[RMDB]
RNA sequence: GGGAACGACUCGAGUAGAGUCGAAAAAUGUCUGCAAAACACAGGUGCCGAUAACAAGCGCACCGACUUCGCCCUCGCCGCCUGAGCGAGCCCCGAAGUCCGUCAGCCCGAGCUAGCUCUCGACUCGGAUCCUGGCGUCAUCUAUAGAGCCACUGCUGGACCCUAUUAACUUCGGUUAAUAGGGUCCAAAAGAAACAACAACAACAAC
Reactivity to 2A3 in 0.01 (KOAc 150mM, MgCl2 10mM, bicine 150mM(pH8.5), 24C), signal-to-noise 1, nucleotides 027 to 156: a000u120g040u000c100u140g110c070a100a080a140a070c110a000c020a020g000g000u000g040c000c020g060a080u060a190a150c110a110a000g000c090g000c090a000c000c000g000a000c020u020u020c000g040c040c030c000u010c000g000c000c010g060c020c070u190g010a100g120c000g000a000g000c090c000c000c000g000a010a000g000u020c000c000g040u000c010a000g000c010c010c040g000a000g010c030u040a010g000c010u020c000u010c070g060a070c010u000c020g070g000a090u140c020c020u000g000g000c000g050u060c000a020u030c050u050a110u020a070g010a000g000c000c050a040c060u090g020c020u070